Structure probing data (2A3) for a 207-nucleotide construct. The 2A3 profile rests on 1,377 reads.
[RMDB]
RNA sequence: GGGAACGACUCGAGUAGAGUCGAAAACGUUUGCUUUCGAGCAAACGAAAAAUCCUAAGUCGUCUGCCGUUAGACAUGAUUGUAUCGGAAACGAUACAGAUCAACAGCUAACGGAACUACAGACGAUAUGGAAAAAAUACUAGCUUCGGCUAGUAAACGUUGUUACAGCUUUCGAGCUGUAACAACGAAAAGAAACAACAACAACAAC
Reactivity to 2A3 in 0.01 (KOAc 150mM, MgCl2 10mM, bicine 150mM(pH8.5), 24C), signal-to-noise 1, nucleotides 027 to 156: c010g000u010u010u000g000c000u090u060u060c050g000a020g010c010a000a000a000c010g090a120a010a000a000a000u030c010c000u070a130a010g060u010c000g000u000c000u000g000c000c010g000u000u010a020g010a150c050a140u030g010a010u000u010g000u000a010u000c010g040g090a140a050a070c000g000a000u010a010c030a030g220a020u010c000a000a070c040a130g000c000u030a000a000c000g010g020a000a000c070u140a010c000a000g000a000c000g000a000u020a020u060g000g000a130a060a000a000a000a020u080a010c000u020a000g030c000u040u030c260g080g000c010u000a000g010u060a000a080a000
The RNA was probed in 150 mM KOAc, 10 mM MgCl2 and 150 mM bicine (pH 8.5) at 24 C.